[RMDB]
RNA sequence: GGGAACGACUCGAGUAGAGUCGAAAAGCGGAAACGCGAAGUCGAUGCUAGGGAUACUCUCUAACUCUCUCAAAAUAAAGACCUAGCAUCGAUGAAUGAGAGAGAAAGGAGAGGAGUAAAAUAAAAAGGGAUAUGAUAUGUUCGCAUAUCAUAUCCCAAAAGAAACAACAACAACAAC
Reactivity to DMS in 0.01 (KOAc 150mM, MgCl2 10mM, bicine 150mM(pH8.5), 24C), signal-to-noise 3, nucleotides 027 to 126: g020c000g010g000a130a190a240c040g000c020g000a120a110g020u000c000g020a030u000g000c000u000a000g000g030g000a300u040a130c000u000c000u000c000u000a170a300c000u000c000u010c020u000c070a050a050a170a070u020a010a100a060g000a070c030c000u010a000g000c000a000u020c030g000a000u000g010a080a060u010g000a010g000a020g000a000g020a000a140a140g000g010a020g020a010g010g020a300g040u050a030a040a070a070u000a040a080a090a090a130
Reactivity to 2A3 in 0.01 (KOAc 150mM, MgCl2 10mM, bicine 150mM(pH8.5), 24C), signal-to-noise 1, nucleotides 027 to 126: g000c010g000g040a100a060a020c010g010c010g050a080a000g010u000c000g010a000u000g000c000u000a000g000g040g000a140u110a170c030u020c010u000c000u020a160a170c000u030c000u000c000u000c040a070a070a000a000u230a100a180a040g080a070c000c000u000a000g000c000a000u000c000g000a000u020g010a000a050u100g000a000g000a000g000a000g000a150a090a010g020g010a020g000a020g030g010a000g080u220a040a120a090a170u300a020a070a030a040a020
Chemical mapping of a 177-nucleotide RNA with DMS and 2A3. The RNA was probed in 150 mM KOAc, 10 mM MgCl2 and 150 mM bicine (pH 8.5) at 24 C. It was measured as part of the RMDB library OK1LIB. In probing experiments dimethyl sulfate is read out at A N1 and C N3, which are open when not base-paired.